[RMDB]
RNA sequence: GGGAACGACUCGAGUAGAGUCGAAAAGCUACAGUCGUUAGCGAUCCGUUAUCCUCGCAAGAAUUUGCCCGGUAGCGUAUAAGCAAAACACAAAUCUAUCCAUGCAAGCAUUUACCGCUGGUGAACCAAUUAGAUGCGUAUUCGUACGCAUCUAAUUAAAAGAAACAACAACAACAAC
Reactivity to 2A3 in 0.01 (KOAc 150mM, MgCl2 10mM, bicine 150mM(pH8.5), 24C), signal-to-noise 8, nucleotides 027 to 126: g020c020u040a030c030a130g080u120c070g050u090u050a010g010c010g030a040u000c010c000g000u030u050a060u130c000c020u030c020g000c020a050a060g070a190a280u060u030u060g020c010c010c000g020g010u020a020g000c020g020u070a070u030a150a040g030c040a030a060a080a010c060a020c020a030a100a050u060c030u080a060u040c020c010a020u100g030c020a020a060g020c020a050u070u080u110a080c020c020g000c050u030g010g020u050g030a040a040c020c000
Reactivity to DMS in 0.01 (KOAc 150mM, MgCl2 10mM, bicine 150mM(pH8.5), 24C), signal-to-noise 9, nucleotides 027 to 126: g000c030u000a040c070a120g020u020c130g010u010u010a110g010c010g020a080u000c050c030g030u000u000a050u010c010c020u000c300g010c070a080a050g010a090a120u000u010u000g000c010c060c170g010g010u010a030g010c040g010u000a050u010a080a160g000c040a050a050a070a050c120a040c080a040a070a090u020c070u010a100u010c030c020a060u000g000c060a080a080g010c040a060u010u010u020a070c080c050g010c040u000g000g010u010g010a070a120c130c080